[RMDB]
RNA sequence: GGGAACGACUCGAGUAGAGUCGAAAAGAUAUGGAAGUGUGAGAGCAACAGCCUGCCCGGGUCGGAAACGACCCUCAGGACAUGCUCUACACUUCCUAAGUCAAACUUAAACCUUCGGGUUUAAGAAUCUAUAAUCCCUGUUCGCAGGGAUUAUAGAAAAAGAAACAACAACAACAAC
Reactivity to DMS in 0.01 (KOAc 150mM, MgCl2 10mM, bicine 150mM(pH8.5), 24C), signal-to-noise 4, nucleotides 027 to 126: g000a020u000a190u010g000g000a010a010g010u000g000u010g020a030g000a010g010c000a080a110c240a150g000c000c000u000g000c300c230c300g020g000g020u000c000g020g000a020a050a130c000g010a020c010c000c000u000c010a010g000g010a040c100a200u000g010c000u000c010u000a020c000a010c000u000u010c000c010u000a000a080g000u000c000a140a150a230c000u000u000a010a010a030c000c000u000u010c260g020g010g010u000u010u000a000a000g000a210a160
Reactivity to 2A3 in 0.01 (KOAc 150mM, MgCl2 10mM, bicine 150mM(pH8.5), 24C), signal-to-noise 3, nucleotides 027 to 126: g000a010u030a000u090g000g000a020a000g010u010g010u190g280a180g020a000g050c120a090a160c130a250g040c010c000u050g020c120c190c040g020g000g000u000c020g000g010a020a020a020c000g000a000c030c000c010u000c000a000g000g020a000c040a160u300g000c000u000c000u000a000c000a000c000u000u010c010c000u000a010a000g000u000c010a010a060a120c000u010u010a020a020a000c010c010u030u040c300g150g000g000u000u010u010a000a000g000a010a090